Structure probing data (2A3 and DMS) for a 177-nucleotide construct. 2A3 adducts were read by reverse transcription with SuperScript II with manganese. Reactivities are given for positions 27 through 126. The 2A3 profile rests on 1,304 reads.

RNA sequence: GGGAACGACUCGAGUAGAGUCGAAAACAUGAUACGCGUGAUUAUGUGUUCGGAUUGAUGCUCGAUUAUGCCAAUUUCAACGAGCAGCACGAGAUAGAGCACAUGCAAAUGGUUAUCGGCGAGCUGCCUUCUAAGUCGCGUUCGCGCGACUUAGAAGAAAAGAAACAACAACAACAAC
Reactivity to 2A3 in 0.01 (KOAc 150mM, MgCl2 10mM, bicine 150mM(pH8.5), 24C), signal-to-noise 2, nucleotides 027 to 126: c000a010u070g020a010u050a040c100g020c090g180u220g120a050u040u130a040u020g000u000g010u020u020c020g010g050a100u040u140g050a040u090g000c010u010c010g060a060u080u120a090u220g070c030c010a080a080u020u200u210c040a110a040c040g030a020g000c010a000g000c020a030c070g040a040g020a030u080a090g050a030g060c020a020c000a120u060g000c000a000a000a110u020g060g030u040u040a010u050c020g070g020c030g040a020g030c010u010g040c010
Reactivity to DMS in 0.01 (KOAc 150mM, MgCl2 10mM, bicine 150mM(pH8.5), 24C), signal-to-noise 2, nucleotides 027 to 126: c010a040u000g010a030u000a010c070g000c190g010u020g000a070u020u000a000u000g020u000g000u000u000c000g000g010a120u000u010g020a130u000g000c000u000c000g040a140u000u000a110u030g010c070c170a140a180u010u010u030c130a150a110c140g010a090g000c010a000g000c040a100c080g010a180g000a030u000a080g010a110g010c090a090c010a010u010g020c240a060a160a050u000g000g000u000u000a050u010c070g000g000c040g010a080g010c030u010g000c040
Annotation:
Conditions: 150 mM KOAc, 10 mM MgCl2 and 150 mM bicine (pH 8.5), 24 C. 2A3 is a SHAPE reagent: it acylates the 2'-hydroxyl of flexible nucleotides of all four kinds.